[RMDB]
RNA sequence: GGGAACGACUCGAGUAGAGUCGAAAAGAUAUGGACAUGUGGACUCAUCGAUCUUAUUCGGAAACGAAUAAGGGAGAGUACCACUGUGUCCUAAGUCAAAACGUUACUCGGUUCGCCGAGUAACGAAUCAGUCAGUACUGUUCGCAGUACUGACUGAAAAAGAAACAACAACAACAAC
Reactivity to DMS in 0.01 (KOAc 150mM, MgCl2 10mM, bicine 150mM(pH8.5), 24C), signal-to-noise 3, nucleotides 027 to 126: g020a030u000a300u000g000g020a010c010a040u020g030u000g000g010a090c010u000c020a300u010c150g030a100u000c010u000u010a020u000u000c020g000g000a120a060a210c010g000a010a000u000a000a000g000g000g000a030g000a010g000u000a150c000c010a020c000u020g050u020g000u020c000c010u010a060a210g010u000c060a070a070a100a200c010g010u000u000a000c000u000c010g020g000u000u030c260g030c010c000g010a020g000u010a000a000c010g000a030a070
Reactivity to 2A3 in 0.01 (KOAc 150mM, MgCl2 10mM, bicine 150mM(pH8.5), 24C), signal-to-noise 2, nucleotides 027 to 126: g040a010u060a020u100g000g010a000c020a010u060g020u010g020g050a140c020u000c050a300u300c180g040a040u010c000u000u010a000u000u010c010g020g010a050a000a070c010g000a030a000u000a000a010g040g030g000a020g030a010g010u110a300c000c000a010c020u030g040u020g000u000c010c000u010a060a000g040u030c030a000a020a130a120c030g000u000u000a010c010u010c000g030g020u080u080c300g020c130c000g000a010g000u000a000a000c000g000a010a130
Conditions: 150 mM KOAc, 10 mM MgCl2 and 150 mM bicine (pH 8.5), 24 C. An RNA of 177 nucleotides, treated with DMS and 2A3 and read out base by base. For 2A3, 6,012 sequencing reads were counted. The DMS profile rests on 2,556 reads. DMS (dimethyl sulfate) methylates the pairing face of unpaired adenines and cytosines.